This 177-nucleotide RNA was probed chemically with DMS and 2A3.
RNA sequence: GGGAACGACUCGAGUAGAGUCGAAAAUGAGAAUCUCGUGCGAGCUCAGCAGAUAUAGAGUAGGACCAGAGCAUUUGAAGUAUAGUAAUACCAACAGUGCGGAGAAUAAUAGUAUCAUGAGAAGCAAUGUAGUUUCGAUAUUCGUAUCGAAACUACAAAAAGAAACAACAACAACAAC
Reactivity to DMS in 0.01 (KOAc 150mM, MgCl2 10mM, bicine 150mM(pH8.5), 24C), signal-to-noise 3, nucleotides 027 to 126: u000g030a130g020a180a090u000c020u000c030g030u000g000c020g000a100g010c020u000c030a070g020c040a070g000a090u000a050u010a070g020a130g000u010a070g020g000a130c040c020a100g000a150g000c030a050u000u010u010g020a100a120g020u000a030u010a100g000u010a070a160u010a030c040c050a030a140c170a050g000u000g020c070g000g000a120g010a070a080u000a110a050u000a050g010u000a020u000c030a050u000g000a030g020a060a130g040c120a070a090
Reactivity to 2A3 in 0.01 (KOAc 150mM, MgCl2 10mM, bicine 150mM(pH8.5), 24C), signal-to-noise 1, nucleotides 027 to 126: u150g000a030g030a130a130u050c030u030c110g080u040g030c030g010a100g120c030u060c020a000g080c090a040g080a040u070a030u090a080g120a010g030u090a000g040g010a010c060c000a020g020a030g060c000a030u080u040u180g030a060a000g000u000a000u060a050g070u060a000a230u010a100c000c010a020a050c000a000g040u010g040c000g010g010a050g020a050a060u130a120a060u070a050g010u040a000u130c000a000u040g060a010g010a090a010g030c010a010a050
DMS adducts were read by reverse transcription with MarathonRT. The 2A3 profile rests on 936 reads. As a SHAPE reagent, 2A3 marks flexible, mostly unpaired nucleotides at the ribose 2'-OH.